[RMDB]
RNA sequence: GGGAACGACUCGAGUAGAGUCGAAAAGGAAUGAGAGGGAGAGCGCAGCAUCUGGCUCCACACGAUCAUCCAGUACAUUUCACCACAUUGUCUGCAGCUCACCUCGCAGGAAUCACUUCGGUGAGCGAAAUAGAGUCUCGUUCGCGAGACUCUAUUUAAAAGAAACAACAACAACAAC
Reactivity to DMS in 0.01 (KOAc 150mM, MgCl2 10mM, bicine 150mM(pH8.5), 24C), signal-to-noise 6, nucleotides 027 to 126: g010g000a130a060u000g010a050g000a110g000g000g010a120g000a020g020c030g010c020a040g010c080a090u040c080u010g000g020c050u000c020c060a050c050a100c110g010a080u020c080a090u010c020c030a090g010u020a110c130a090u030u000u010c080a130c030c040a080c150a110u020u030g000u010c030u000g010c020a130g020c010u000c000a110c000c010u010c050g030c080a040g010g010a120a080u020c080a050c060u000u020c090g010g020u000g000a030g020c130g010
Reactivity to 2A3 in 0.01 (KOAc 150mM, MgCl2 10mM, bicine 150mM(pH8.5), 24C), signal-to-noise 5, nucleotides 027 to 126: g070g020a140a050u050g010a030g020a020g080g090g010a250g010a010g080c070g020c080a010g000c020a130u070c030u060g020g020c030u050c070c020a040c010a020c060g040a050u040c050a030u010c050c030a020g060u100a070c060a170u100u090u130c110a140c090c000a030c040a110u070u100g070u070c030u070g010c030a060g000c000u000c000a040c000c000u050c040g000c050a010g050g070a050a110u100c050a020c060u030u040c130g000g000u020g010a020g030c020g010